[RMDB]
RNA sequence: GGGAACGACUCGAGUAGAGUCGAAAACGCUGGGCACGAUGGUAGGGGAGCUCCCACUGAAGCGCGCACGGUGGUGAGCAUCGAUCCGAGAGUAGUGCCUGUGCUGAAGCGCGCACGGCAACCGAAAGGUGCGAAAAGAAUGUCUUCGGACAUUCAAGUUAUUAUCGAGAUUCGUCUCGAUAAUAACAAAAGAAACAACAACAACAAC
Reactivity to 2A3 in 0.01 (KOAc 150mM, MgCl2 10mM, bicine 150mM(pH8.5), 24C), signal-to-noise 4, nucleotides 027 to 156: c050g000c020u070g010g010g000c000a010c030g130a130u090g150g080u070a080g010g040g000g000a010g010c000u010c000c010c000a010c000u040g040a190a050g030c040g010c010g000c080a010c040g000g000u010g000g050u280g010a020g000c000a070u300c020g050a030u020c000c000g060a060g000a000g120u150a010g000u000g000c030c000u000g010u020g000c020u060g020a070a010g000c010g000c000g000c010a000c000g040g020c030a060a080c030c000g100a110a050a000g070g000u050g020c040g010a060a080a010a050g010a000a010u010g000u000c010u030u080c230g100g010a000c000a010u020u010c010a020a020
Reactivity to DMS in 0.01 (KOAc 150mM, MgCl2 10mM, bicine 150mM(pH8.5), 24C), signal-to-noise 2, nucleotides 027 to 156: c060g080c080u020g040g010g040c030a010c000g010a160u000g000g030u010a290g000g010g030g020a090g020c030u000c000c000c020a020c040u000g000a060a090g020c010g010c000g100c000a300c040g030g040u000g020g010u000g020a020g030c030a120u000c110g010a100u030c010c030g000a300g040a160g000u010a140g030u010g000c020c020u010g000u000g030c000u020g020a080a070g010c040g000c000g040c010a120c020g030g050c040a160a150c030c000g000a090a140a130g050g010u000g000c030g000a120a100a150a150g020a010a010u010g030u000c000u000u020c250g010g000a000c000a000u000u010c010a000a220

Conditions: 150 mM KOAc, 10 mM MgCl2 and 150 mM bicine (pH 8.5), 24 C. The record gives the reactivity of an RNA of 207 nucleotides to 2A3 and DMS. It was measured as part of the RMDB library RNAMAK. 2A3 adducts were read by reverse transcription with SuperScript II with manganese. High DMS reactivity at an A or C suggests that its Watson-Crick edge is free.